An RNA of 177 nucleotides, treated with 2A3 and DMS and read out base by base.
RNA sequence: GGGAACGACUCGAGUAGAGUCGAAAAGUGUCACGCAGCAAGCGGACAGCUACUCCGCCUUCGUGGAGGACAACGGGGUGUCGACGGGUCUGGCCGGGCUGCUGCACUCCAUCGGCGCGCGCCGCGAGCACGUGGAGUCGUUCGCGAUUCCACGUGCAAAAGAAACAACAACAACAAC
Reactivity to 2A3 in 0.01 (KOAc 150mM, MgCl2 10mM, bicine 150mM(pH8.5), 24C), signal-to-noise 9, nucleotides 027 to 126: g040u030g120u150c080a070c200g000c000a020g000c020a110a100g230c010g010g010a010c000a010g010c020u070a080c010u010c010c000g020c010c010u210u300c060g030u060g050g130a200g070g080a040c040a070a020c070g000g000g010g010u060g080u130c040g030a090c090g020g010g020u020c020u020g030g000c010c000g010g040g000c000u010g000c000u000g000c000a010c010u010c010c010a100u100c030g020g000c020g010c050g010c040g010c040c020g040c040g030a040
Reactivity to DMS in 0.01 (KOAc 150mM, MgCl2 10mM, bicine 150mM(pH8.5), 24C), signal-to-noise 5, nucleotides 027 to 126: g020u000g000u030c030a070c100g030c010a060g030c070a120a120g010c010g010g010a020c030a040g010c090u010a050c040u000c000c020g000c020c060u010u020c050g010u010g010g000a140g010g010a130c140a240a120c040g000g010g000g000u010g010u030c130g000a070c120g010g010g000u020c030u000g000g000c010c010g000g000g000c020u000g000c010u020g020c020a030c030u000c030c030a090u020c040g000g000c040g010c120g000c130g020c000c010g020c170g010a090

The RNA was probed in 150 mM KOAc, 10 mM MgCl2 and 150 mM bicine (pH 8.5) at 24 C. The DMS profile rests on 13,669 reads. The data come from the RNA Mapping Database (RMDB), library OK1LIB.